[RMDB]
RNA sequence: GGGAACGACUCGAGUAGAGUCGAAAACCCAAAGCGUUCGCGCUUUGGGAAAGAAUAAACGAGCGAAAAGAAUGAUGUGGACGCUCGUAAAAACGACAUCAAAAAGUCAACGGUUCGCCGUUGACAACAGAUUAUCAUUCUUCGGAAUGAUAAUCUGAAAAGAAACAACAACAACAAC
Reactivity to DMS in 0.01 (KOAc 150mM, MgCl2 10mM, bicine 150mM(pH8.5), 24C), signal-to-noise 4, nucleotides 027 to 126: c000c000c000a000a000a010g000c000g030u000u010c220g050c010g020c000u010u000u000g010g000g000a020a020a050g000a120a080u010a050a140a070c010g000a010g010c000g000a090a080a140a100g000a080a130u000g010a060u000g010u000g010g020a270c020g010c000u000c000g010u000a020a020a040a100a060c170g010a060c040a010u010c030a040a090a090a120a090g000u000c000a010a000c000g010g010u000u010c240g000c000c000g010u000u000g000a000c000a060a100
Reactivity to 2A3 in 0.01 (KOAc 150mM, MgCl2 10mM, bicine 150mM(pH8.5), 24C), signal-to-noise 6, nucleotides 027 to 126: c010c000c000a000a000a000g010c010g020u050u140c200g000c000g000c020u010u000u000g010g000g000a070a110a010g070a040a060u210a160a170a010c010g000a000g000c020g080a090a050a050a090g120a070a170u160g040a030u060g040u040g090g030a030c050g000c000u000c010g010u030a060a000a000a010a020c050g060a020c010a030u030c010a000a050a060a030a020g000u000c000a000a000c010g010g030u030u040c170g010c060c000g000u000u010g000a000c000a000a000
Structure probing data (DMS and 2A3) for a 177-nucleotide construct. 2A3 adducts were read by reverse transcription with SuperScript II with manganese. It was measured as part of the RMDB library M2PK50. DMS adducts were read by reverse transcription with MarathonRT.